[RMDB]
RNA sequence: GGGAACGACUCGAGUAGAGUCGAAAACUUGCAAAGGCUGAGUUAUGCUGUUCUGCACGCAUGGUUUGGAGAGAGUGGUGCAAUGUCUGUGGCAUAAAAGAUGUUGUUCUACAAGGCUUAAAAGCUUCUUAUUAGCACAGUUCGCUGUGCUAAUAAGAAAAGAAACAACAACAACAAC
Reactivity to 2A3 in 0.01 (KOAc 150mM, MgCl2 10mM, bicine 150mM(pH8.5), 24C), signal-to-noise 1, nucleotides 027 to 126: c020u010u110g010c020a000a070a080g080g000c010u050g000a030g130u090u030a050u150g000c050u020g060u070u050c040u050g020c040a010c030g050c000a060u060g060g000u070u060u060g040g000a050g010a000g000a010g020u030g030g020u020g000c040a000a000u040g020u030c030u050g080u060g030g050c030a020u070a070a100a020a010g040a050u030g020u040u020g000u000u000c010u010a060c030a060a000g050g000c010u040u100a010a080a070a000g010c010u000u010
Reactivity to DMS in 0.01 (KOAc 150mM, MgCl2 10mM, bicine 150mM(pH8.5), 24C), signal-to-noise 1, nucleotides 027 to 126: c040u010u000g020c030a110a110a100g030g020c030u000g010a120g020u000u000a050u000g020c020u000g000u000u000c070u000g010c100a050c120g050c060a050u000g040g000u000u000u000g000g000a120g000a030g030a100g000u000g000g000u020g000c030a040a040u010g010u010c030u020g030u030g010g020c110a100u000a040a040a090a050g020a050u000g010u000u000g000u000u000c030u010a060c100a060a040g060g000c000u000u010a050a100a110a180g000c040u000u020